[RMDB]
RNA sequence: GGGAACGACUCGAGUAGAGUCGAAAACCUGCUAGAACCUCCAAACAAGCUCAAGGUCCAUUUGUAGGAGAACGUAGGGUAGUCAAGCUUCCAAGACUGCAGACACAUCCAAGUGAGGCACUGCAUGGCAGUUUCGGACUUUCGAGUCCGAAACUGCAAAAGAAACAACAACAACAAC
Reactivity to 2A3 in 0.01 (KOAc 150mM, MgCl2 10mM, bicine 150mM(pH8.5), 24C), signal-to-noise 1, nucleotides 027 to 126: c000c000u000g010c000u000a000g040a120a110c000c000u000c000c000a090a000a000c020a100a100g030c040u050c020a100a000g090g040u000c010c000a040u040u000u060g070u120a000g000g040a040g000a000a010c010g070u090a130g070g000g050u000a000g010u000c040a050a210g000c020u070u000c020c000a070a020g080a010c090u020g000c000a010g010a040c020a000c000a110u000c000c000a030a010g110u020g100a050g080g000c020a000c020u000g000c040a020u010g100
The data come from the RNA Mapping Database (RMDB), library RFM100. The record gives the reactivity of an RNA of 177 nucleotides to 2A3. As a SHAPE reagent, 2A3 marks flexible, mostly unpaired nucleotides at the ribose 2'-OH. Reactivities are given for positions 27 through 126. The RNA was probed in 150 mM KOAc, 10 mM MgCl2 and 150 mM bicine (pH 8.5) at 24 C.